RNA sequence: GGGAACGACUCGAGUAGAGUCGAAAACGUUUAUGAUCCUUCUCGCCCCGUUAUGGGUUCGAGUCGCACGGAAGCCUUAGCACUAUGUGCAUUGUAUUUUAAUACGCUGCACCCGUGCUAGUGCCAAUGAUGAUGUCAUUGGUGCGACGUCAUCAAACUUCUCAUCCCAGUUCGCUGGGAUGAGAAGAAAAGAAACAACAACAACAAC
Reactivity to 2A3 in 0.01 (KOAc 150mM, MgCl2 10mM, bicine 150mM(pH8.5), 24C), signal-to-noise 2, nucleotides 027 to 156: c040g010u050u150u140a170u200g070a020u100c010c000u150u000c020u020c050g030c000c030c000c000g120u130u210a220u300g000g000g000u060u210c000g020a010g000u000c000g000c000a010c010g220g070a130a000g000c000c010u020u030a000g000c020a010c000u070a070u290g000u000g010c000a000u000u000g000u000a020u000u190u000u240a260a060u010a000c000g000c030u000g000c000a010c000c020c000g000u000g000c000u020a020g000u040g000c000c010a000a000u020g020a000u020g040a070u260g050u080c020a000u000u030g000g030u040g050c030g040a020c030g140u010c010a060u020c000a010a060a010
Structure probing data (2A3) for a 207-nucleotide construct. 2A3 adducts were read by reverse transcription with SuperScript II with manganese. The reactions ran in a buffer of 150 mM KOAc, 10 mM MgCl2 and 150 mM bicine (pH 8.5), at 24 C. For 2A3, 949 sequencing reads were counted. It was measured as part of the RMDB library RSTRND. Values cover nucleotides 27 to 156.